[RMDB]
Source information:
The data come from the RNA Mapping Database (RMDB), library OK3TST. Structure probing data (DMS and 2A3) for a 207-nucleotide construct. The DMS profile rests on 12,772 reads. The reactions ran in a buffer of 150 mM KOAc, 10 mM MgCl2 and 150 mM bicine (pH 8.5), at 24 C.
RNA sequence: GGGAACGACUCGAGUAGAGUCGAAAAAGUUCUAGUCCUCACCUAAGAUCAGACUCACAAGGCCCUCAAAGGAAGAGCACUUGGUUGGGCUUUGUGGUGGGGAUGAGUGUCUCAUUUUUAGUCCCAAAUUAAAAACGAGAUUUUGGGCUGUACAUCAUAAUACUACCUAGUUCGCUAGGUAGUAUUAAAAAGAAACAACAACAACAAC
Reactivity to DMS in 0.01 (KOAc 150mM, MgCl2 10mM, bicine 150mM(pH8.5), 24C), signal-to-noise 5, nucleotides 027 to 156: a100g000u000u000c040u010a210g010u000c010c000u000c000a070c020c030u020a070a110g010a120u010c060a180g000a160c090u010c030a210c020a040a020g010g020c000c010c000u000c040a050a060a100g010g010a120a140g010a200g040c090a080c030u000u000g010g030u010u000g020g010g030c010u000u000u000g020u000g010g040u000g030g030g030g020a020u010g000a120g020u000g020u000c000u000c010a070u000u010u000u010u000a060g010u010c040c060c090a080a070a110u010u000a020a010a030a030a050c040g000a060g020a130u000u000u000u000g010g010g030c070u000g000u000a090c100a130u010c060a290
Reactivity to 2A3 in 0.01 (KOAc 150mM, MgCl2 10mM, bicine 150mM(pH8.5), 24C), signal-to-noise 5, nucleotides 027 to 156: a010g070u070u030c010u020a000g010u000c000c000u000c000a000c010c020u100a120a040g010a120u120c090a060g080a140c030u010c060a000c000a000a000g000g000c000c010c000u020c050a080a070a020g070g010a070a070g040a030g080c030a020c080u040u040g060g030u160u050g010g020g000c000u000u000u000g010u000g000g000u000g000g010g000g010a010u020g000a010g010u070g060u000c010u000c040a100u050u130u040u050u190a030g060u160c000c000c010a010a010a000u050u040a030a040a040a030a040c110g030a080g010a130u040u030u000u020g020g010g010c030u050g050u140a080c050a100u140c020a020